[RMDB]
The record gives the reactivity of an RNA of 177 nucleotides to DMS.
The data come from the RNA Mapping Database (RMDB), libraries RFM100 and RFMREP.
Values cover nucleotides 27 to 126.

RNA sequence: GGGAACGACUCGAGUAGAGUCGAAAAGAAAGCAGCCGUGAUGAAAAAAACUUGUGUCCUUGAGACGGUUUUCUUAUAGAAAUCGUCUUUGACGGCAACACAACCCUCUAAGAAGUUCUGAGCUGAAUCGUACGGUAUUGUUCGCAAUACCGUACGAAAAAGAAACAACAACAACAAC
Reactivity to DMS in 0.01 (KOAc 150mM, MgCl2 10mM, bicine 150mM(pH8.5), 24C), signal-to-noise 2, nucleotides 027 to 126: g000a070a090a140g010c020a030g000c000c030g000u000g010a070u020g000a000a020a060a120a060a100a060c130u000u000g000u000g010u010c060c020u030u000g000a000g000a010c000g020g010u000u000u000u020c020u010u050a150u010a120g000a010a000a000u000c020g000u000c020u010u020u050g030a070c150g000g000c110a080a000c010a060c030a050a020c000c000c020u010c060u030a130a060g010a100a150g010u000u010c030u020g000a080g020c020u020g000a100a110